This 207-nucleotide RNA was probed chemically with DMS and 2A3. For 2A3 the reverse transcriptase was SuperScript II with manganese. The data come from the RNA Mapping Database (RMDB), library OK3TST. The DMS profile rests on 4,297 reads. Reactivities are rounded to 0.1 and cut off at 0 and 3.
RNA sequence: GGGAACGACUCGAGUAGAGUCGAAAAGAGUACGCGAGAGCGUACUCAGCAUCCGAGAGGAUGCGAUGACUGUUGGGCCCUAGCUUACCCAACAGUCUAAUGAUGUAGUGGUGUGUUCCGACCCACAUUAUUGCAUCUAAAGGUCGGUCGCUAGGGACCAGUGAUAAAUGUUCGCAUUUAUCACUGGAAAAGAAACAACAACAACAAC
Reactivity to DMS in 0.01 (KOAc 150mM, MgCl2 10mM, bicine 150mM(pH8.5), 24C), signal-to-noise 2, nucleotides 027 to 156: g000a010g000u000a000c010g030c020g010a300g010a300g010c000g060u000a020c010u000c010a030g020c000a010u010c000c000g000a300g010a300g000g030a010u000g010c020g040a100u010g010a020c010u000g000u000u000g000g020g040c050c050c010u000a050g030c050u000u030a080c010c000c000a010a000c020a010g000u000c020u000a050a050u010g010a020u000g040u000a010g010u010g000g030u000g010u010g010u000u000c040c160g010a230c130c050c000a040c020a020u000u000a020u010u000g020c000a000u000c030u000a080a150a140g010g030u010c070g050g000u010c080g000c030u000a030g000g040g000a230
Reactivity to 2A3 in 0.01 (KOAc 150mM, MgCl2 10mM, bicine 150mM(pH8.5), 24C), signal-to-noise 4, nucleotides 027 to 156: g000a000g000u010a000c000g000c010g010a030g000a000g090c010g010u000a000c000u000c000a000g000c010a000u010c000c000g060a050g000a010g050g000a000u000g000c020g040a150u130g010a000c000u000g000u010u000g000g000g020c020c000c000u000a010g000c020u060u160a050c010c000c000a000a010c000a000g000u000c000u010a080a140u160g020a000u020g010u050a020g000u010g020g020u010g000u000g020u130u180c120c080g040a100c040c000c000a010c000a000u010u070a030u020u040g010c000a000u000c030u100a080a040a120g140g030u120c090g030g040u030c010g020c000u000a000g020g000g000a020